[RMDB]
RNA sequence: GGGAACGACUCGAGUAGAGUCGAAAAAGCGAUGAUACGUCAUCGCAACGAUUGCCUGAUCGUAAAACAGGAGACGGCCGUGGCCGCGACCACGUAAAAAAGCGUAACGUGGGCUACGGACCACGAAAAAAGCGCGGAACGUUCGCGUUCCGCGCAAUCUAUUGAUCAGCUUCGGCUGAUCAAUAGAAAAAGAAACAACAACAACAAC
Reactivity to 2A3 in 0.01 (KOAc 150mM, MgCl2 10mM, bicine 150mM(pH8.5), 24C), signal-to-noise 1, nucleotides 027 to 156: a000g000c000g000a000u000g000a000u010a110c180g090u000c010a000u040c000g020c000a000a020c000g000a020u000u020g020c000c000u000g020a010u010c020g160u230a020a030a010a010c020a010g000g020a040g070a040c180g010g000c010c000g010u010g040g000c020c000g020c000g010a040c010c060a000c020g020u050a180a060a000a120a000a000g040c010g030u010a050a020c000g000u050g140g040g000c010u000a000c000g020g030a130c010c000a010c010g090a140a000a020a020a000a000g000c020g000c060g010g010a020a010c000g010u080u100c160g030c010g090u000u000c000c010g010c000g000c000a000a000